[RMDB]
RNA sequence: GGGAACGACUCGAGUAGAGUCGAAAAGGAGUUAGAACGUCAACAUAUGGGGAGUGAGGCAUGGUUUAGUUCGUAACACUUGGUGAGUCCGUUACUGGGCAGCAGAGGAAAGGGCUGCCAGGCAGAGCCGUGCCUUUGUGUUCGCACAAAGGCACGGAAAAGAAACAACAACAACAAC
Reactivity to DMS in 0.01 (KOAc 150mM, MgCl2 10mM, bicine 150mM(pH8.5), 24C), signal-to-noise 1, nucleotides 027 to 126: g040g010a030g010u000u020a110g020a080a040c120g000u000c070a060a110c070a070u020a100u000g010g000g000g010a090g010u000g030a090g010g020c040a020u000g010g010u000u000u010a080g010u000u000c110g030u000a100a070c090a040c040u000u000g010g000u010g010a130g000u000c070c060g010u020u000a010c030u010g010g020g010c040a050g000c000a090g010a130g000g010a030a050a100g000g060g000c010u000g000c000c020a080g010g000c140a150g000a140g000
Reactivity to 2A3 in 0.01 (KOAc 150mM, MgCl2 10mM, bicine 150mM(pH8.5), 24C), signal-to-noise 1, nucleotides 027 to 126: g050g000a030g000u040u050a060g090a090a010c030g030u020c010a020a050c030a080u130a070u260g020g000g000g030a080g020u050g020a030g030g020c010a040u020g020g000u010u090u070a040g030u050u050c040g020u080a070a020c030a000c040u000u040g000g000u030g080a000g030u020c030c040g010u030u100a070c020u050g000g020g000c000a020g010c000a010g030a060g090g060a070a080a030g050g000g000c020u010g000c000c000a000g060g000c040a010g010a030g110